[RMDB]
Structure probing data (DMS and 2A3) for a 177-nucleotide construct. Reactivities are rounded to 0.1 and cut off at 0 and 3. DMS adducts were read by reverse transcription with MarathonRT.

RNA sequence: GGGAACGACUCGAGUAGAGUCGAAAAGAUAUGGACAGGAGGGAGCUGUGUAUCGGAAACGAUACUCAGCAUCGAUCUCCGUCCUAAGUCAAAGAUCUAGUAAGUAGUUCGCUACUUACUAGAUCAACGCUACUCUAGUGUUCGCACUAGAGUAGCGAAAAGAAACAACAACAACAAC
Reactivity to DMS in 0.01 (KOAc 150mM, MgCl2 10mM, bicine 150mM(pH8.5), 24C), signal-to-noise 2, nucleotides 027 to 126: g020a000u000a230u030g010g000a030c000a130g020g030a020g010g010g010a020g010c000u000g000u010g010u000a000u000c000g040g010a030a030a090c000g010a020u000a000c000u000c000a010g060c000a140u000c180g000a090u000c000u000c010c000g000u000c010c000u010a020a080g000u020c000a130a150a080g000a000u000c010u000a000g010u000a000a000g010u000a000g000u010u000c280g010c010u010a000c000u000u000a000c000u000a000g010a000u000c000a010a040
Reactivity to 2A3 in 0.01 (KOAc 150mM, MgCl2 10mM, bicine 150mM(pH8.5), 24C), signal-to-noise 2, nucleotides 027 to 126: g000a000u020a020u080g050g000a040c290a290g040g000a020g020g000g000a040g000c000u020g010u020g000u030a010u010c010g020g000a000a030a000c010g010a000u000a010c000u010c000a000g000c010a030u150c010g000a020u000c000u010c010c000g000u000c000c010u000a080a020g040u000c060a220a130a070g010a000u010c000u010a000g000u010a010a000g000u010a000g010u040u080c300g030c140u000a000c000u000u010a000c000u000a000g000a000u010c000a000a000